Overview:
The record gives the reactivity of an RNA of 177 nucleotides to DMS and 2A3. It was measured as part of the RMDB library OK2TST. DMS adducts were read by reverse transcription with MarathonRT.
[RMDB]
RNA sequence: GGGAACGACUCGAGUAGAGUCGAAAAGAGACCAAACACCUGAGCUUGUGGGUGACACUUUGUAUGCAAACUACAGCAGUGGUUUAGGCCUCACCCAUACACAUUUAUCUGGAAGGACUUGGGGGCAACCUCUCACUAAGUUCGCUUAGUGAGAGGUAAAAGAAACAACAACAACAAC
Reactivity to DMS in 0.01 (KOAc 150mM, MgCl2 10mM, bicine 150mM(pH8.5), 24C), signal-to-noise 6, nucleotides 027 to 126: g020a060g010a070c010c030a070a110a130c240a050c040c010u000g000a160g000c050u000u000g030u000g000g010g020u010g000a070c060a020c050u010u000u010g010u010a060u000g010c120a060a070a080c060u000a010c020a040g010c100a060g020u000g010g010u000u010u000a160g020g020c040c040u000c010a170c010c010c010a110u000a080c170a090c140a070u000u000u010a060u020c090u000g020g010a110a060g000g000a060c070u000u000g010g010g000g010g010c240a090
Reactivity to 2A3 in 0.01 (KOAc 150mM, MgCl2 10mM, bicine 150mM(pH8.5), 24C), signal-to-noise 5, nucleotides 027 to 126: g010a000g010a000c020c000a010a090a000c030a020c010c030u060g050a040g090c030u150u140g020u020g030g000g010u040g030a020c010a010c040u170u190u180g080u130a070u100g040c050a080a080a130c050u020a020c020a010g000c010a030g050u020g030g010u060u060u060a070g000g030c000c010u010c010a040c010c010c010a020u110a020c110a000c010a030u070u170u160a140u130c070u080g060g040a080a040g060g000a060c020u050u050g030g000g000g000g000c010a020
Reactivities are given for positions 27 through 126. The DMS profile rests on 6,867 reads.